[RMDB]
RNA sequence: GGGAACGACUCGAGUAGAGUCGAAAAUCAUCAAGAAGUAGGCUUAGGCCAAUUGCUUGGUGGUGAAAGUAGAGGGAAGGUAGCACUUCGACGCGUCUAAGUACGCUGUGGGAGUAGUGCUUAAAUCAAAAGCACAGCGACUUCGGUCGCUGUGCAAUCUAAUGCUAGAGUUCGCUCUAGCAUUAGAAAAAGAAACAACAACAACAAC
Reactivity to DMS in 0.01 (KOAc 150mM, MgCl2 10mM, bicine 150mM(pH8.5), 24C), signal-to-noise 2, nucleotides 027 to 156: u000c010a030u010c000a010a020g010a030a050g020u000a120g030g000c010u000u000a150g090g000c000c020a020a070u010u000g000c010u000u010g030g080u020g000g010u000g020a050a090a100g020u000a110g000a130g030g010g030a110a080g020g000u000a070g000c040a060c010u010u000c010g010a040c030g000c000g000u000c020u010a120a170g020u000a010c010g000c010u010g080u000g000g000g010a070g030u010a050g040u020g030c030u010u000a050a080a120u000c060a040a070a120a180g000c000a010c000a020g010c020g020a010c010u000u010c300g030g020u000c000g040c010u000g000u000g010c010a000a020
Reactivity to 2A3 in 0.01 (KOAc 150mM, MgCl2 10mM, bicine 150mM(pH8.5), 24C), signal-to-noise 4, nucleotides 027 to 156: u010c000a000u000c000a000a010g020a100a040g040u100a030g020g000c020u100u110a120g220g000c010c010a040a080u050u030g010c000u000u000g000g000u000g000g000u050g010a080a070a000g130u230a010g020a090g040g040g040a070a080g070g020u050a000g070c000a010c000u030u030c050g050a020c020g020c000g000u000c040u150a240a110g050u100a090c010g030c170u180g010u060g070g030g020a030g030u090a040g030u030g000c010u030u060a050a080a050u130c070a080a040a000a010g000c000a000c000a000g010c010g000a000c000u030u070c260g060g010u000c010g000c000u000g010u010g000c000a000a000